[RMDB]
RNA sequence: GGGAACGACUCGAGUAGAGUCGAAAAGAUAUGGAAGUUCAAGGAUACGUACGGUAGACAUGCAGGCACGUCGGAAACGACGUGCCCUGCAACAGCUACCCGUACGUAUCCUUGAACUUCCUAAGUCGUAUUACUUUAUGUUCGCAUAAAGUAAUACAAAAGAAACAACAACAACAAC
Reactivity to DMS in 0.01 (KOAc 150mM, MgCl2 10mM, bicine 150mM(pH8.5), 24C), signal-to-noise 2, nucleotides 027 to 126: g010a110u000a300u000g010g000a010a000g020u010u010c000a010a000g000g000a010u000a020c000g030u000a000c030g020g010u000a000g010a050c110a260u000g000c000a040g000g000c010a000c000g020u000c000g000g000a120a100a240c010g010a010c000g010u000g000c180c010c000u010g000c010a030a060c300a140g020c010u000a010c130c070c090g010u010a000c000g010u000a000u000c000c010u000u000g000a010a000c000u000u000c010c000u000a010a060g010u000c110